[RMDB]
RNA sequence: GGGAACGACUCGAGUAGAGUCGAAAAGAUAUGGAUCCUGUUGACAUGUCGAUACAUCGGAAACGAUGUACGACAACAGCAACUGGAUCCUAAGUCAAAGGGCACUUCUGUUCGCAGAAGUGCCCAAGAACUUAAUGAAGUUCGCUUCAUUAAGUUCAAAAGAAACAACAACAACAAC
Reactivity to DMS in 0.01 (KOAc 150mM, MgCl2 10mM, bicine 150mM(pH8.5), 24C), signal-to-noise 4, nucleotides 027 to 126: g000a010u000a070u010g000g000a010u000c000c000u000g000u000u000g010a030c090a170u020g020u000c000g000a300u000a010c000a000u000c010g020g010a020a010a030c000g020a010u000g000u000a000c000g000a010c000a070a060c300a130g000c010a010a000c000u000g000g010a020u000c000c000u010a000a050g010u000c000a110a150a160g010g010g020c000a010c000u000u000c000u000g000u010u010c270g020c000a020g000a010a020g010u000g010c000c000c000a000a020

This 177-nucleotide RNA was probed chemically with DMS. The reactions ran in a buffer of 150 mM KOAc, 10 mM MgCl2 and 150 mM bicine (pH 8.5), at 24 C. DMS adducts were read by reverse transcription with MarathonRT. Reactivities are given for positions 27 through 126. The DMS profile rests on 9,016 reads.